This 177-nucleotide RNA was probed chemically with 2A3 and DMS. For 2A3, 3,708 sequencing reads were counted. For DMS the reverse transcriptase was MarathonRT.
[RMDB]
RNA sequence: GGGAACGACUCGAGUAGAGUCGAAAAGAAAAUAGCGUAAUCGACAUUGAGAAUGUACGCUAAGUGUGUGUUGUAUAAAUAACGUCCAAUUGAACACACACACAGUUGGACCUAAUGUCCAAAAAAAGAGUAUUCCUAAGUUCGCUUAGGAAUACUCAAAAGAAACAACAACAACAAC
Reactivity to 2A3 in 0.01 (KOAc 150mM, MgCl2 10mM, bicine 150mM(pH8.5), 24C), signal-to-noise 3, nucleotides 027 to 126: g130a010a120a000a080u090a010g000c010g020u040a030a050u050c030g040a050c100a180u120u270g040a050g060a190a070u160g030u070a000c000g010c030u010a110a090g000u000g000u000g000u000g010u040u090g080u080a060u110a140a180a020u150a090a040c080g120u000c030c020a020a020u030u120g090a080a000c010a010c000a000c000a000c000a000c000a050g100u050u040g000g000a000c010c010u070a160a040u220g000u000c000c000a040a120a000a000a000a000a000
Reactivity to DMS in 0.01 (KOAc 150mM, MgCl2 10mM, bicine 150mM(pH8.5), 24C), signal-to-noise 3, nucleotides 027 to 126: g010a100a060a110a120u010a020g010c000g020u010a020a070u000c090g010a160c190a180u020u000g010a140g010a070a060u000g010u000a010c000g000c000u000a020a140g010u010g000u000g010u010g000u010u000g020u000a040u010a030a060a070u010a070a120c150g010u000c050c050a070a070u000u000g000a050a010c010a000c000a010c000a040c000a030c080a100g000u010u010g010g000a010c010c160u000a090a080u000g000u000c000c050a000a000a050a090a090a110a050